[RMDB]
RNA sequence: GGGAACGACUCGAGUAGAGUCGAAAAAGGAAGGCGGCCUCCCGCGUCAAAACGCACCGGACGGCGUCGGGAUUGAAGCGGGCGAGCAGGGCCCCGGUGGCCAGGUACGUCAUGCGGCCGGCAUAGCGUACCAGCAUAGUUUCGACUAUGCUGGUACAAAAGAAACAACAACAACAAC
Reactivity to 2A3 in 0.01 (KOAc 150mM, MgCl2 10mM, bicine 150mM(pH8.5), 24C), signal-to-noise 6, nucleotides 027 to 126: a010g190g000a040a020g050g030c030g010g010c010c000u010c000c000c000g000c000g000u010c010a050a080a050a060c100g040c040a100c030c030g080g050a080c100g020g040c030g030u220c030g010g000g000a090u130u150g040a090a010g040c020g000g020g010c020g000a070g050c040a080g010g060g000c000c000c020c060g060g050u190g010g000c010c020a020g000g030u060a060c010g010u020c010a020u140g010c000g010g000c010c000g030g010c050a080u160a030g110c100
Reactivity to DMS in 0.01 (KOAc 150mM, MgCl2 10mM, bicine 150mM(pH8.5), 24C), signal-to-noise 3, nucleotides 027 to 126: a130g000g030a160a070g000g010c000g000g020c020c030u010c010c000c020g030c020g020u000c040a100a020a130a080c130g000c070a110c020c070g020g000a220c150g000g020c030g010u020c030g020g030g020a080u010u010g010a160a080g020c000g000g000g020c030g010a200g020c040a040g000g000g000c020c010c020c150g000g000u040g020g020c010c000a050g000g030u000a030c020g020u010c010a050u020g010c040g000g000c020c020g000g000c040a050u030a110g000c190
This 177-nucleotide RNA was probed chemically with 2A3 and DMS. Values cover nucleotides 27 to 126. Conditions: 150 mM KOAc, 10 mM MgCl2 and 150 mM bicine (pH 8.5), 24 C.